[RMDB]
RNA sequence: GGGAACGACUCGAGUAGAGUCGAAAAGAGAGUGUGACAAUGACAUUGUUCAUCAAAUAAACCCAAAAUCAGCAGUGCAAUGUGUCGAGGAAAUUAGACAUGCUGCCAAGGAAUUCAAGGGUGUCGAAGUCAAGUACAGUUUCGACUGUACUUGACUAAAAGAAACAACAACAACAAC
Reactivity to 2A3 in 0.01 (KOAc 150mM, MgCl2 10mM, bicine 150mM(pH8.5), 24C), signal-to-noise 6, nucleotides 027 to 126: g160a000g020a010g030u080g030u040g040a030c030a010a070u140g030a040c050a160u120u040g030u100u060c020a040u060c050a030a070a070u210a090a140a080c030c000c000a070a080a020a060u140c030a020g020c040a010g010u050g110c030a020a140u190g040u020g020u050c010g020a050g040g200a130a060a150u110u060a070g010a000c000a000u030g010c010u000g000c000c010a070a030g180g020a060a040u130u110c100a090a060g050g000g000u060g050u130c060g060a050
Reactivity to DMS in 0.01 (KOAc 150mM, MgCl2 10mM, bicine 150mM(pH8.5), 24C), signal-to-noise 6, nucleotides 027 to 126: g010a140g020a040g020u010g010u050g000a040c060a040a020u000g000a080c080a300u000u000g000u030u000c030a020u010c070a040a080a160u020a060a100a050c000c000c000a070a090a100a060u030c040a120g010c120a090g000u040g020c070a020a040u010g010u000g010u000c000g010a130g000g000a090a060a090u010u010a120g000a010c020a000u000g000c100u010g000c000c030a130a060g000g020a060a060u010u040c130a080a090g000g010g000u010g010u010c080g000a130
About this RNA
Structure probing data (2A3 and DMS) for a 177-nucleotide construct. The RNA was probed in 150 mM KOAc, 10 mM MgCl2 and 150 mM bicine (pH 8.5) at 24 C. Reactivities are rounded to 0.1 and cut off at 0 and 3. The 2A3 profile rests on 4,677 reads. Source: RMDB library OK1LIB, as collected in RNAgym. For DMS, 9,576 sequencing reads were counted.